[RMDB]
RNA sequence: GGGAACGACUCGAGUAGAGUCGAAAAAUACAGCCUGGGACUUCGGAUCAGUCGGGGGUGUGUUCAACUCACUGGGUAAGGGCAUUCACCAGAUUUUUGGAGCAGCCUUCAAAUCACUGUUUGGAGGGAAAGUAUUAUCGUUCGCGAUAAUACUUUCAAAAGAAACAACAACAACAAC
Reactivity to 2A3 in 0.01 (KOAc 150mM, MgCl2 10mM, bicine 150mM(pH8.5), 24C), signal-to-noise 9, nucleotides 027 to 126: a000u160a020c040a020g060c010c000u040g020g010g050a050c010u060u040c090g070g020a070u100c060a040g050u050c030g030g000g000g000g020u030g010u010g000u020u080c020a040a050c020u020c050a070c040u050g010g030g010u090a060a050g050g040g000c030a040u050u060c030a070c040c010a030g040a130u090u110u040u090u170g080g010a050g010c040a010g030c030c000u000u010c010a020a040a030u120c080a070c170u120g040u050u020u010g030g010a020g010g040
Reactivity to DMS in 0.01 (KOAc 150mM, MgCl2 10mM, bicine 150mM(pH8.5), 24C), signal-to-noise 6, nucleotides 027 to 126: a060u020a090c110a090g000c030c020u010g000g000g000a090c050u000u010c080g000g000a080u030c080a060g020u010c050g010g000g000g000g010u000g010u010g000u020u020c050a080a090c080u010c050a060c070u000g010g000g020u020a090a080g010g000g010c050a050u020u010c070a100c030c020a040g000a150u020u010u010u020u000g010g010a080g000c130a110g010c000c010u000u000c020a010a010a020u010c180a110c170u070g000u000u000u000g000g000a070g000g000